[RMDB]
RNA sequence: GGGAACGACUCGAGUAGAGUCGAAAAGCGGGGCUUGAAACGCGGGUAGCGCGCACGCCCGGCGAAGAAGUUCGCAUACGCGGUGUGCUGGUGCCGAAGUGUCUGCUGCAACGGCACGCUCGACAGCUAGAACAUACCGUAUUCGUACGGUAUGUAAUACUAUGAAUACGUUCGCGUAUUCAUAGUAAAAAGAAACAACAACAACAAC
Reactivity to DMS in 0.01 (KOAc 150mM, MgCl2 10mM, bicine 150mM(pH8.5), 24C), signal-to-noise 5, nucleotides 027 to 156: g010c020g010g020g040g040c030u010u000g000a110a080a070c030g000c020g000g010g020u000a120g040c020g000c040g030c020a080c070g010c010c000c030g020g000c010g010a050a190g010a150a180g020u000u000c030g010c030a150u000a230c050g000c060g050g030u000g020u000g010c010u020g010g020u000g030c020c030g000a080a180g000u010g000u000c070u000g020c060u010g000c060a110a130c050g010g010c010a030c020g010c060u000c020g000a080c010a090g000c020u000a110g010a130a070c000a010u000a010c010c000g010u010a040u010u000c290g030u000a010c010g020g000u000a000u000g010u000a050a150
Reactivity to 2A3 in 0.01 (KOAc 150mM, MgCl2 10mM, bicine 150mM(pH8.5), 24C), signal-to-noise 8, nucleotides 027 to 156: g020c030g000g010g010g020c030u090u130g080a100a120a020c030g010c020g020g050g070u130a050g050c020g000c010g000c060a010c030g010c000c000c000g000g010c020g010a020a010g080a040a020g160u040u020c010g000c040a040u070a210c070g020c100g010g000u000g010u000g000c020u040g030g020u020g010c000c020g020a070a050g040u080g050u130c120u130g060c040u060g010c040a050a010c010g000g000c000a010c010g000c010u040c020g060a080c040a060g000c030u080a060g040a100a000c000a000u000a000c000c000g000u000a020u010u060c160g030u040a000c000g000g000u000a000u000g000u000a000a000

Notes:
Structure probing data (DMS and 2A3) for a 207-nucleotide construct. Source: RMDB library M2RFOK, as collected in RNAgym. 2A3 adducts were read by reverse transcription with SuperScript II with manganese. The 2A3 profile rests on 10,817 reads.